[RMDB]
RNA sequence: GGGAACGACUCGAGUAGAGUCGAAAAGCUCUACAGCAGUUAGCCAUUCCUCAUUGACUGCGGUAGAUGUAUUAUACAAAACUAUUCCAAUGUUUAACAAGGGCCAUUUUACGAGAUUAUUAAAUCCUUGUUUGAUAAAUGUAGCCAAUGAGGGUUCGACUGCUCUUAGGUUCGCCUAAGAGCAGUCAAAAGAAACAACAACAACAAC
Reactivity to 2A3 in 0.01 (KOAc 150mM, MgCl2 10mM, bicine 150mM(pH8.5), 24C), signal-to-noise 2, nucleotides 027 to 156: g010c010u010c000u010a000c000a010g120c000a000g030u000u030a020g050c010c010a030u050u020c020c000u000c000a010u000u030g000a000c010u000g030c030g020g010u090a080g000a100u070g070u050a110u220u080a070u100a050c070a070a120a100a040c030u040a050u020u080c010c010a130a100u130g030u050u070u030a000a000c010a000a000g000g000g030c060c060a120u050u080u020u120a070c060g120a030g000a200u070u090a060u080u140a150a030a030u040c000c000u000u000g030u030u000u040g000a000u050a120a170a070u090g000u030a000g000c010c000a000a000u000g000a000g010g000g000u030u080c010